An RNA of 177 nucleotides, treated with 2A3 and DMS and read out base by base. Reactivities are given for positions 27 through 126. Source: RMDB library OK1LIB, as collected in RNAgym.
RNA sequence: GGGAACGACUCGAGUAGAGUCGAAAAGCACUGCCUGUUUAUGGUGGUCGUUAAUGUCAAAACCAUUAAAGCCGCGUUGGGUCGUGGAAGUUCUAUGAAACCGUAUCAUAGGAUAUGGGCGACGCAGCUAUAAUAAAUAAUUCGUUAUUUAUUAUAGAAAAGAAACAACAACAACAAC
Reactivity to 2A3 in 0.01 (KOAc 150mM, MgCl2 10mM, bicine 150mM(pH8.5), 24C), signal-to-noise 5, nucleotides 027 to 126: g050c040a010c040u040g020c000c010u140g110u220u250u140a140u210g030g000u020g020g000u000c010g010u010u090a070a030u070g040u070c060a030a050a020a090c030c000a000u040u040a050a020a020g030c010c010g030c000g070u050u070g070g010g020u020c010g000u000g020g050a080a040g030u010u010c000u000a010u020g020a130a110a110c110c070g060u160a080u070c010a010u010a020g040g000a010u020a050u160g060g030g020c020g000a000c020g010c050a020g000
Reactivity to DMS in 0.01 (KOAc 150mM, MgCl2 10mM, bicine 150mM(pH8.5), 24C), signal-to-noise 8, nucleotides 027 to 126: g000c090a050c030u000g000c000c000u000g020u030u040u040a060u020g010g030u000g000g010u000c050g020u000u010a030a030u010g020u020c100a120a110a130a140c260c010a030u010u010a030a090a090g010c010c030g010c060g000u000u000g010g000g020u010c020g010u000g000g010a110a300g010u010u000c010u000a010u010g010a020a090a140c220c240g010u020a060u010c010a020u000a020g010g000a010u010a040u020g010g000g010c020g000a020c010g010c030a060g010
About this RNA:
The RNA was probed in 150 mM KOAc, 10 mM MgCl2 and 150 mM bicine (pH 8.5) at 24 C.